Structure probing data (2A3) for a 207-nucleotide construct. The RNA was probed in 150 mM KOAc, 10 mM MgCl2 and 150 mM bicine (pH 8.5) at 24 C. 2A3 adducts were read by reverse transcription with SuperScript II with manganese. The 2A3 profile rests on 1,589 reads.
[RMDB]
RNA sequence: GGGAACGACUCGAGUAGAGUCGAAAACGCUGGGCUCCUUGGAGUAGUACAUGGGAGCUGAAGCGCGCACGGCGAAGAACAUGUACGAUCUCCUUGGAGCCUGUGCUGAAGCGCGCACGGCAACCGAAAGGUGCGAUGACCGGUUUUCGAACCGGAACACCAGGUCAAAUUUCGAUUUGACCUGGUGAAAAGAAACAACAACAACAAC
Reactivity to 2A3 in 0.01 (KOAc 150mM, MgCl2 10mM, bicine 150mM(pH8.5), 24C), signal-to-noise 1, nucleotides 027 to 156: c030g030c030u020g000g010g000c000u010c020c010u010u000g010g000a010g000u300a010g000u000a060c010a000u020g000g010g010a000g030c000u000g020a060a010g020c000g010c000g000c010a020c010g000g000c000g060a300a010g000a050a000c000a020u040g000u010a010c010g050a260u270c010u010c000c000u000u000g000g000a000g000c000c010u020g010u000g000c050u060g000a080a010g000c000g000c000g000c000a040c020g040g010c000a070a120c020c010g040a110a020a000g000g000u030g020c000g050a060u170g090a080c000c010g000g050u000u040u120u070c160g010a020a000c000c020g000g010a020a020